The record gives the reactivity of an RNA of 207 nucleotides to DMS and 2A3. Conditions: 150 mM KOAc, 10 mM MgCl2 and 150 mM bicine (pH 8.5), 24 C.

[RMDB]
RNA sequence: GGGAACGACUCGAGUAGAGUCGAAAAGUAAGGGUGUGCAUGUGUGGGUGUGUGUACACACGUGUGCAUGUGUGUGUGAGGGCGUUCAUCUGUUGUCAUGCAGGUGCUGUGUGGGUGCAUGUGUGGGCAUCUGUACGUGUGUGUGCCCGUGCAUGUACUAAAAUGACCCAUUCGUGGGUCAUUUUAGAAAAGAAACAACAACAACAAC
Reactivity to DMS in 0.01 (KOAc 150mM, MgCl2 10mM, bicine 150mM(pH8.5), 24C), signal-to-noise 1, nucleotides 027 to 156: g020u000a080a090g000g040g020u010g040u000g000c010a070u020g000u010g050u000g020g040g020u000g060u000g010u000g020u000a040c030a020c030a020c060g000u000g060u020g020c020a050u000g020u010g030u010g010u000g000u000g000a120g000g020g040c040g040u000u000c050a060u000c060u020g020u000u010g030u000c080a140u000g020c040a080g040g050u020g010c040u000g030u010g000u000g000g020g030u010g010c020a020u010g000u010g040u000g020g010g020c020a010u000c060u020g010u000a110c140g000u000g020u000g020u000g020u000g000c000c000c010g050u000g030c020a020u000g000u000a030
Reactivity to 2A3 in 0.01 (KOAc 150mM, MgCl2 10mM, bicine 150mM(pH8.5), 24C), signal-to-noise 4, nucleotides 027 to 156: g170u180a060a070g070g030g000u090g020u050g020c050a070u040g020u010g000u040g040g050g020u070g000u020g030u030g070u150a020c010a000c010a000c030g040u030g030u050g020c030a050u050g040u000g000u000g010u010g020u020g040a070g030g010g000c050g020u070u060c020a100u020c030u040g060u050u060g120u120c060a090u170g000c000a000g030g000u020g000c060u040g020u030g020u050g070g010g030u020g000c000a010u010g010u010g010u000g020g010g010c000a010u020c070u060g120u120a090c150g070u110g030u040g020u010g000u010g080c000c000c000g000u000g000c000a000u010g010u020a020

Annotation: For 2A3 the reverse transcriptase was SuperScript II with manganese. For DMS, 5,550 sequencing reads were counted. It was measured as part of the RMDB library OK3TST.